[RMDB]
RNA sequence: GGGAACGACUCGAGUAGAGUCGAAAAGGAUCCUAUCUCGUGGUAACUGGGUCUAGAUCAGUUACCAGUGAGUAGGUAUUCACUAUGUGUCAAUGAUCUAGACGUUGACAUAUAGCAGAUAGGAUCGCUACAGGAAUCUAUUCGUAGAUUCCUGUAGAAAAGAAACAACAACAACAAC
Reactivity to DMS in 0.01 (KOAc 150mM, MgCl2 10mM, bicine 150mM(pH8.5), 24C), signal-to-noise 8, nucleotides 027 to 126: g010g000a000u000c000c000u000a010u000c000u000c060g030u000g010g010u000a010a010c000u000g010g010g010u000c210u010a130g000a080u010c000a010g010u000u000a000c000c000a080g010u000g000a020g010u000a100g020g020u000a030u000u000c010a050c000u000a010u000g020u000g010u000c000a010a010u000g000a130u010c200u010a120g010a130c010g020u000u000g000a020c010a010u000a000u000a010g000c080a020g000a020u000a010g010g000a010u000c000g000
Reactivity to 2A3 in 0.01 (KOAc 150mM, MgCl2 10mM, bicine 150mM(pH8.5), 24C), signal-to-noise 7, nucleotides 027 to 126: g030g000a000u000c000c000u000a010u000c010u010c010g040u020g000g000u000a000a000c000u010g010g010g060u060c110u100a080g020a230u060c000a000g000u000u000a000c000c000a000g000u010g010a010g020u070a130g100g150u120a100u040u020c000a000c010u010a010u030g000u000g000u000c000a000a010u020g030a170u070c060u170a060g050a200c010g020u000u000g000a000c000a000u010a000u000a000g000c020a000g000a000u000a000g010g000a000u000c000g000
Chemical mapping of a 177-nucleotide RNA with DMS and 2A3. The RNA was probed in 150 mM KOAc, 10 mM MgCl2 and 150 mM bicine (pH 8.5) at 24 C.